[RMDB]
RNA sequence: GGGAACGACUCGAGUAGAGUCGAAAAGGGGACGCCGCCGCGAUCGCCGACGAUGCCGCGCGACAUCACCGCGGCCCGGCCGAACGGAUCGAUGUUGCCGACGGCGGCGAGCGUGCCGUCCGUGAGACUAAUAUGGCUCGUUCGCGAGCCAUAUUAGAAAAGAAACAACAACAACAAC
Reactivity to 2A3 in 0.01 (KOAc 150mM, MgCl2 10mM, bicine 150mM(pH8.5), 24C), signal-to-noise 2, nucleotides 027 to 126: g100g020g000g000a020c000g070c160c040g070c050c020g040c010g040a080u020c000g010c000c000g010a000c020g120a080u230g170c080c010g050c000g000c000g050a010c000a020u010c010a010c000c000g020c020g020g010c000c020c090g240g000c000c000g020a180a060c060g010g000a020u110c060g020a020u050g000u020u030g010c020c000g000a040c000g020g010c000g000g010c000g000a000g000c000g000u020g000c000c000g000u000c000c000g080u080g090a080g030a010
Reactivity to DMS in 0.01 (KOAc 150mM, MgCl2 10mM, bicine 150mM(pH8.5), 24C), signal-to-noise 3, nucleotides 027 to 126: g020g020g010g000a020c020g010c190c130g020c120c020g020c010g000a070u000c030g010c030c030g010a060c050g000a130u010g020c110c030g020c170g010c010g000a010c010a010u000c020a070c020c000g000c000g000g000c000c150c100g010g010c000c010g000a100a070c070g020g010a090u010c120g010a010u000g010u000u000g000c020c000g000a100c000g000g000c020g010g010c010g020a020g000c030g010u010g010c050c010g000u000c000c000g010u010g000a130g010a260